[RMDB]
RNA sequence: GGGAACGACUCGAGUAGAGUCGAAAAAAAGAAUGCUGUGCAAAUCUGUUUAUUAAAAUAAGCAUCACUCCUAAUUAGUUUUUGCCUAUUUAUGAGGGGGAUAUCCUCUAACAGAGCAUAAUCCAGGCAAAUUAGGGCAAUUCGUUGCCCUAAUUUGAAAAGAAACAACAACAACAAC
Reactivity to 2A3 in 0.01 (KOAc 150mM, MgCl2 10mM, bicine 150mM(pH8.5), 24C), signal-to-noise 1, nucleotides 027 to 126: a020a000a000g030a030a000u050g010c020u030g010u000g110c040a020a070a300u080c050u010g080u100u090u060a260u160u140a060a060a060a060u010a030a020g000c000a000u020c010a030c050u000c030c020u130a160a130u110u240a020g080u040u000u000u140u190g010c000c000u040a080u020u070u000a120u200g010a040g060g000g030g000g000a040u090a060u280c010c000u040c000u030a020a020c020a000g000a030g090c010a030u000a130a000u000c060c000a000g030g060
Reactivity to DMS in 0.01 (KOAc 150mM, MgCl2 10mM, bicine 150mM(pH8.5), 24C), signal-to-noise 2, nucleotides 027 to 126: a020a070a070g010a100a030u010g010c050u000g000u000g030c100a150a110a130u000c030u000g020u010u000u010a100u020u010a060a030a040a040u010a020a020g030c010a000u000c080a050c040u010c130c090u020a050a120u010u010a080g010u000u010u000u010u000g010c010c010u000a020u010u000u010a040u010g010a040g010g010g000g010g020a140u000a080u000c010c000u000c010u000a000a000c050a030g010a070g010c010a020u010a030a080u000c060c040a110g010g000
Source: RMDB library OK2TRN, as collected in RNAgym. An RNA of 177 nucleotides, treated with 2A3 and DMS and read out base by base. 2A3 adducts were read by reverse transcription with SuperScript II with manganese. The reactions ran in a buffer of 150 mM KOAc, 10 mM MgCl2 and 150 mM bicine (pH 8.5), at 24 C.